Chemical mapping of a 207-nucleotide RNA with 2A3.
RNA sequence: GGGAACGACUCGAGUAGAGUCGAAAAGUCCGCGACCGACGCAUACUUCGGGACGAUCCACGGGGCGGUGUAGGUGCCGUCACCCUUGAACGUGACCGAGAGAUCACCUGUGGAGCUGACCGCCACCGGAGCAGCGGCAGUCACUGUCGGGGCUGCGCUGAACUCUCGGAUUCGUCCGAGAGUUCAGAAAAGAAACAACAACAACAAC
Reactivity to 2A3 in 0.01 (KOAc 150mM, MgCl2 10mM, bicine 150mM(pH8.5), 24C), signal-to-noise 2, nucleotides 027 to 156: g020u000c010c010g130c020g040a080c040c000g060a030c010g040c030a020u080a150c030u040u050c000g000g010g000a000c010g020a070u060c030c000a000c040g000g000g010g000c050g040g000u060g040u110a110g030g100u200g090c010c010g030u030c080a210c000c010c000u040u070g040a090a000c030g030u060g050a150c030c020g060a060g010a000g050a200u030c010a020c030c030u020g000u070g050g060a040g010c040u070g050a140c000c010g010c020c010a100c020c030g030g000a050g030c030a010g000c000g010g000c000a010g060u100c020a040c170u080g010u010c010g000g020g010g000c010u040g020c030g000
The reactions ran in a buffer of 150 mM KOAc, 10 mM MgCl2 and 150 mM bicine (pH 8.5), at 24 C. Values cover nucleotides 27 to 156.